[RMDB]
RNA sequence: GGGAACGACUCGAGUAGAGUCGAAAAGCUAUUAACCGCACUCCGCGCCAAACCAUCGAAGCCGCAGUGCGUGAAGUCAUCGGCCCAUUGCGCGGCGCAGAAGUCGAAAUCUUUGCGCCGGAAGGCGCGGUUGGAUACGGUUCGCCGUAUCCAACCGAAAAGAAACAACAACAACAAC
Reactivity to DMS in 0.01 (KOAc 150mM, MgCl2 10mM, bicine 150mM(pH8.5), 24C), signal-to-noise 4, nucleotides 027 to 126: g010c050u000a090u010u010a110a170c240c030g000c040a060c020u010c080c040g040c120g030c020c050a070a120a130c180c150a060u000c150g000a140a130g010c030c010g000c180a030g010u010g010c060g000u000g000a090a060g010u000c070a100u000c080g000g000c010c020c010a120u000u010g000c030g010c030g020g000c010g020c000a010g000a020a020g010u000c060g010a080a150a070u010c030u000u000u000g010c000g030c000c000g010g020a070a090g010g000c030g010
Reactivity to 2A3 in 0.01 (KOAc 150mM, MgCl2 10mM, bicine 150mM(pH8.5), 24C), signal-to-noise 4, nucleotides 027 to 126: g030c020u030a070u250u140a250a050c050c000g000c010a020c020u040c030c010g030c020g000c030c040a160a150a110c060c060a150u170c130g080a100a020g030c000c010g000c040a010g020u010g040c000g000u000g030a040a010g070u080c020a070u110c090g090g000c030c000c000a010u050u080g020c090g000c000g020g010c000g000c000a030g060a240a010g050u170c170g090a080a050a090u040c010u030u030u040g000c010g030c030c020g000g030a030a040g080g000c030g000
Description
An RNA of 177 nucleotides, treated with DMS and 2A3 and read out base by base. Conditions: 150 mM KOAc, 10 mM MgCl2 and 150 mM bicine (pH 8.5), 24 C. For DMS, 3,650 sequencing reads were counted. 2A3 adducts were read by reverse transcription with SuperScript II with manganese. DMS adducts were read by reverse transcription with MarathonRT.